[RMDB]
RNA sequence: GGGAACGACUCGAGUAGAGUCGAAAAAUAAGUUAUUUAAUGCACAAAGCCUGUGGAUAAGUCAGCACAAACUCAGGGGAUUGAUCCUGACGCACGUUCUCAUGACAGGCCAAAAGAGAAUUGUGCGCUGCACUAGCUUUUUCGAAAGCUAGUGCAGAAAAGAAACAACAACAACAAC
Reactivity to DMS in 0.01 (KOAc 150mM, MgCl2 10mM, bicine 150mM(pH8.5), 24C), signal-to-noise 3, nucleotides 027 to 126: a150u010a060a070g020u010u010a030u000u010u010a030a040u040g000c050a040c050a080a060a170g000c010c010u010g020u000g000g020a050u000a040a070g010u010c030a040g010c140a040c110a080a040a090c100u020c010a020g040g010g010g000a150u010u000g000a080u000c060c020u010g000a040c000g000c080a100c060g010u000u000c020u010c020a110u000g000a070c080a060g020g000c030c080a120a050a090a090g000a050g010a030a040u010u010g010u010g000c000g000